[RMDB]
RNA sequence: GGGAACGACUCGAGUAGAGUCGAAAAGGGAGUCCCUCUCCCCGGCGCCAUUUUGCUUGACUUCUACGAGGCGCUUCGGAGGGGUCAGUAUUGGAGAGUGAGAGUGGGGAAAUGUCUUCAAUACACGCAGUGAUGUGAACUUCGGUUCACAUUAUUGAAAAGAAACAACAACAACAAC
Reactivity to DMS in 0.01 (KOAc 150mM, MgCl2 10mM, bicine 150mM(pH8.5), 24C), signal-to-noise 9, nucleotides 027 to 126: g000g010g000a090g010u010c060c010c010u010c010u000c010c000c120c130g010g000c060g020c010c010a060u030u020u020u020g010c080u020u020g010a090c080u010u010c050u010a070c110g010a080g000g010c050g010c030u010u010c300g000g000a020g010g000g000g000u010c050a060g010u000a010u000u000g000g000a010g000a120g020u020g000a090g010a080g010u010g000g000g000g010a080a080a080u020g000u000c010u000u000c010a040a030u000a030c030a170c220g010
Reactivity to 2A3 in 0.01 (KOAc 150mM, MgCl2 10mM, bicine 150mM(pH8.5), 24C), signal-to-noise 9, nucleotides 027 to 126: g020g010g020a050g050u060c010c000c000u010c000u000c000c000c000c010g010g000c000g010c010c000a040u080u070u090u250g040c040u080u070g050a180c030u100u040c020u140a070c070g070a060g020g000c000g000c000u010u020c010g000g000a000g000g010g000g000u030c030a010g000u000a010u010u020g010g000a020g000a010g030u140g030a080g010a020g060u150g020g020g000g020a030a060a060u130g040u000c000u000u000c000a010a010u020a030c030a010c070g030
Source information: Chemical mapping of a 177-nucleotide RNA with DMS and 2A3. For 2A3, 39,636 sequencing reads were counted. 2A3 adducts were read by reverse transcription with SuperScript II with manganese.